[RMDB]
RNA sequence: GGGAACGACUCGAGUAGAGUCGAAAAGAAUGACAUGGAUGACAGGCAUCAAUCCAUUAAAUGUGUAACAAGAAGUAUAAAGGAAUGCUCUGGCAGACAGCAACAGGGCCCUGUACUUAUUCAGACUAAGGGUCAGGGAAGGCUGCCCCAAGGCAGUUCCUUGAGUCAUUUUCGAAUGACUCAAGGAAAAAGAAACAACAACAACAAC
Reactivity to DMS in 0.01 (KOAc 150mM, MgCl2 10mM, bicine 150mM(pH8.5), 24C), signal-to-noise 2, nucleotides 027 to 156: g010a090a060u010g000a120c100a080u000g000g000a020u000g000a300c050a080g010g050c030a140u010c140a170a120u000c020c040a100u000u000a030a150a090u020g000u000g000u000a060a080c070a150a080g000a070a090g000u010a080u010a100a060a080g030g030a110a060u000g030c000u000c050u010g000g000c050a190g010a100c050a060g000c030a060a190c030a090g000g030g050c000c020c000u010g030u010a070c030u000u000a090u000u010c090a080g020a120c230u000a100a030g000g010g000u000c020a040g000g010g010a070a100g020g000c000u000g000c010c020c000c020a000a030g000g020c070a110g000u000
Reactivity to 2A3 in 0.01 (KOAc 150mM, MgCl2 10mM, bicine 150mM(pH8.5), 24C), signal-to-noise 3, nucleotides 027 to 156: g070a030a090u090g010a010c030a030u020g010g020a000u010g020a040c080a120g050g050c040a020u050c020a040a110u010c010c000a010u020u140a070a130a030u120g090u020g010u060a080a040c060a070a050g090a110a000g080u070a060u090a190a160a020g030g000a080a030u050g000c010u000c020u060g000g000c030a010g040a250c040a070g070c010a020a130c000a030g040g040g000c000c000c000u030g000u030a040c000u060u070a100u110u140c050a010g050a080c010u050a030a070g030g010g020u020c010a000g040g030g020a040a030g030g000c010u030g000c000c030c030c010a040a020g060g000c000a030g070u070